Chemical mapping of a 177-nucleotide RNA with 2A3 and DMS.
2A3 adducts were read by reverse transcription with SuperScript II with manganese.
Reactivities are given for positions 27 through 126.
The reactions ran in a buffer of 150 mM KOAc, 10 mM MgCl2 and 150 mM bicine (pH 8.5), at 24 C.
The 2A3 profile rests on 937 reads.

RNA sequence: GGGAACGACUCGAGUAGAGUCGAAAAGAAUUUCUGUCCUUUUGGAGCUCAGUAAGGCACCAAACCACCUGAGUCUUGUGCUUCACAAAAUCAAAGUUCAUCAGAAUCAUUCAUUGGGAUGGAAUUGUACGUGUGGUAACUUCGGUUACCACACGUAAAAAGAAACAACAACAACAAC
Reactivity to 2A3 in 0.01 (KOAc 150mM, MgCl2 10mM, bicine 150mM(pH8.5), 24C), signal-to-noise 1, nucleotides 027 to 126: g020a060a060u100u010u000c010u020g010u000c000c000u000u000u060u070g000g010a020g010c000u000c050a030g060u090a220a270g020g000c030a040c070c070a060a030a040c000c030a020c010c010u030g040a020g020u000c020u020u060g020u000g060c050u100u000c040a020c090a090a120a090a110u090c090a010a050a050g020u030u030c030a060u050c020a050g110a080a060u080c040a070u130u030c010a000u010u020g090g000g000a020u020g000g000a000a020u020u110g090
Reactivity to DMS in 0.01 (KOAc 150mM, MgCl2 10mM, bicine 150mM(pH8.5), 24C), signal-to-noise 1, nucleotides 027 to 126: g010a180a040u010u000u000c010u000g050u000c010c010u000u000u000u010g010g000a010g000c050u010c060a030g000u010a130a130g010g000c080a080c190c150a050a160a110c040c070a130c150c080u000g010a070g020u000c080u000u000g010u000g030c090u000u000c140a130c150a010a080a020a040u010c100a050a010a080g040u010u000c040a060u030c180a060g000a030a090u010c070a030u000u010c030a040u000u000g000g010g010a030u000g010g000a010a040u040u000g000
Annotation:
It was measured as part of the RMDB library OK2TST.